[RMDB]
RNA sequence: GGGAACGACUCGAGUAGAGUCGAAAAGGUAGGGCAUUCGUGCCCUACCACACCUCUAAGCAGAUUGGCGAGGACGACGUCCCGGCCCACGUUUACCAACAACUACUCUCUCCUUCGGGAGAGAGAAAUCCAGGGGUUAAUUCGUUAACCCCUGGAUAAAAGAAACAACAACAACAAC
Reactivity to 2A3 in 0.01 (KOAc 150mM, MgCl2 10mM, bicine 150mM(pH8.5), 24C), signal-to-noise 3, nucleotides 027 to 126: g000g000u000a000g000g020g010c030a030u030u080c210g090u050g040c000c020c000u010a010c000c000a000c000a000c010c010u020c050u080a090a030g040c050a050g080a300u150u190g050g040c020g060a110g030g040a090c130g060a040c100g120u020c000c030c000g070g010c030c010c000a030c040g010u020u060u090a200c030c000a020a040c000a010a040c050u120a070c000u030c000u010c000u010c010c020u030u060c130g100g020g000a000g000a000g000a000g000a010a000
Reactivity to DMS in 0.01 (KOAc 150mM, MgCl2 10mM, bicine 150mM(pH8.5), 24C), signal-to-noise 3, nucleotides 027 to 126: g000g000u000a010g000g000g030c000a050u000u020c210g040u000g000c010c000c010u000a000c000c010a040c150a040c060c010u010c100u020a080a200g020c050a090g010a110u000u000g010g040c070g020a090g020g010a070c060g000a060c150g020u010c010c020c030g010g000c030c020c040a150c070g000u010u000u000a140c010c030a090a060c100a020a050c120u010a190c000u000c000u000c000u000c000c000u000u010c180g020g010g010a000g000a000g000a010g000a010a070